[RMDB]
This 177-nucleotide RNA was probed chemically with 2A3 and DMS. Reactivities are given for positions 27 through 126. The reactions ran in a buffer of 150 mM KOAc, 10 mM MgCl2 and 150 mM bicine (pH 8.5), at 24 C. For 2A3 the reverse transcriptase was SuperScript II with manganese.
RNA sequence: GGGAACGACUCGAGUAGAGUCGAAAAACCUGAUGAUUCGUCAUCAGGUCACAUGCCGCCCGAACGGCUUCCUGACCGGGCGGAUUCACUUUAAAUGCAGCACUGCUGCAUCAUUCGUGAUGCAGAACCAUUUAGACUAUUUCGAUAGUCUAAAUGGAAAAGAAACAACAACAACAAC
Reactivity to 2A3 in 0.01 (KOAc 150mM, MgCl2 10mM, bicine 150mM(pH8.5), 24C), signal-to-noise 9, nucleotides 027 to 126: a000c000c000u000g000a000u000g000a000u010u110c190g060u000c100a000u000c000a000g000g000u010c010a080c000a090u160g030c000c000g000c010c000c010g040a100a040c080g080g010c000u080u030c010c010u020g020a050c040c020g000g000g010c010g000g000a010u050u030c030a030c040u090u120u230a090a150a050u160g030c030a020g030c030a050c300u210g000c010u000g000c030a000u000c000a020u030u100c130g070u010g010a010u030g000c030a020g020a070a040
Reactivity to DMS in 0.01 (KOAc 150mM, MgCl2 10mM, bicine 150mM(pH8.5), 24C), signal-to-noise 9, nucleotides 027 to 126: a020c000c000u000g010a000u000g000a020u000u010c190g010u000c000a010u000c010a000g010g010u000c080a060c160a110u010g010c010c010g010c010c000c020g010a080a170c180g010g000c110u000u000c020c020u010g010a210c170c010g010g000g020c010g010g000a030u000u000c060a030c060u000u010u010a060a100a070u000g010c050a030g010c050a110c180u010g000c000u000g000c000a000u000c020a070u000u010c190g010u000g000a010u000g010c050a070g000a090a170